[RMDB]
RNA sequence: GGGAACGACUCGAGUAGAGUCGAAAAGGGUAACGGAGAAGCGAGUUACAGAACCAUGCGGACAAUAUCGAUUUUGCCCAGUUCUUCAUACAGUGUUUCAACCUGCUCGAUAUGAGUGGCGUUGAUAUGACGUUGGAAUAUUCGUAUUCCAACGUCAAAAAGAAACAACAACAACAAC
Reactivity to 2A3 in 0.01 (KOAc 150mM, MgCl2 10mM, bicine 150mM(pH8.5), 24C), signal-to-noise 2, nucleotides 027 to 126: g100g010g000u050a060a000c050g000g070a080g010a130a000g060c040g030a050g060u030u040a050c030a050g040a060a000c030c040a070u130g010c090g060g010a020c060a070a070u060a100u200c070g060a050u070u020u020u160g010c010c000c000a000g040u060u000c000u090u070c030a060u110a130c080a050g150u070g000u190u060u020c000a000a000c000c000u020g000c020u000c030g190a180u070a120u300g000a000g000u000g010g000c050g000u000u030g020a000u000a080
Reactivity to DMS in 0.01 (KOAc 150mM, MgCl2 10mM, bicine 150mM(pH8.5), 24C), signal-to-noise 3, nucleotides 027 to 126: g000g010g000u010a030a080c080g010g030a160g030a120a040g030c060g000a080g020u000u010a110c080a060g010a080a150c070c060a040u000g030c090g000g000a040c060a070a080u000a200u010c050g010a130u000u000u010u000g000c010c010c020a120g000u000u000c060u010u010c080a080u020a100c160a080g000u000g020u010u010u000c000a010a010c010c010u000g000c010u010c030g000a210u010a080u020g000a030g020u000g010g020c160g010u020u000g000a020u000a090
Structure probing data (2A3 and DMS) for a 177-nucleotide construct.
For 2A3, 1,396 sequencing reads were counted.
Values cover nucleotides 27 to 126.